[RMDB]
RNA sequence: GGGAACGACUCGAGUAGAGUCGAAAAGGUAAAAUACAGUAAGUUUCCUCAUCUGUGAAAUAGAAAUCCCACUAGUCGUUGACUCAGGAACUUGCUGUGAAGAUUAGAGAUGAGGUGUGCAAAAAAACCGUAUGCUUUAAUUCGUUAAAGCAUACGGAAAAGAAACAACAACAACAAC
Reactivity to 2A3 in 0.01 (KOAc 150mM, MgCl2 10mM, bicine 150mM(pH8.5), 24C), signal-to-noise 2, nucleotides 027 to 126: g090g010u070a070a090a110a040u240a040c000a000g000u010a030a010g010u010u080u120c000c000u000c010a040u000c020u050g070u050g120a080a070a040u110a040g080a040a090a030u060c000c000c010a010c010u020a000g050u020c050g160u070u170g030a050c020u020c090a010g020g010a010a000c000u000u020g010c010u010g010u010g000a020a000g040a070u060u120a030g010a000g010a110u060g020a020g030g010u060g010u030g050c000a070a080a010a010a090a020a000
Reactivity to DMS in 0.01 (KOAc 150mM, MgCl2 10mM, bicine 150mM(pH8.5), 24C), signal-to-noise 3, nucleotides 027 to 126: g010g020u000a070a080a120a100u010a050c000a030g000u000a040a030g000u000u000u000c010c010u000c050a050u010c030u000g020u010g010a070a070a100u010a070g000a050a120a120u000c000c000c000a160c080u000a030g020u000c020g020u000u000g000a050c090u000c160a070g010g000a040a020c010u000u000g020c020u000g010u000g020a080a050g000a100u000u000a060g010a070g000a020u000g010a040g000g000u000g010u000g000c050a000a010a080a120a080a060a120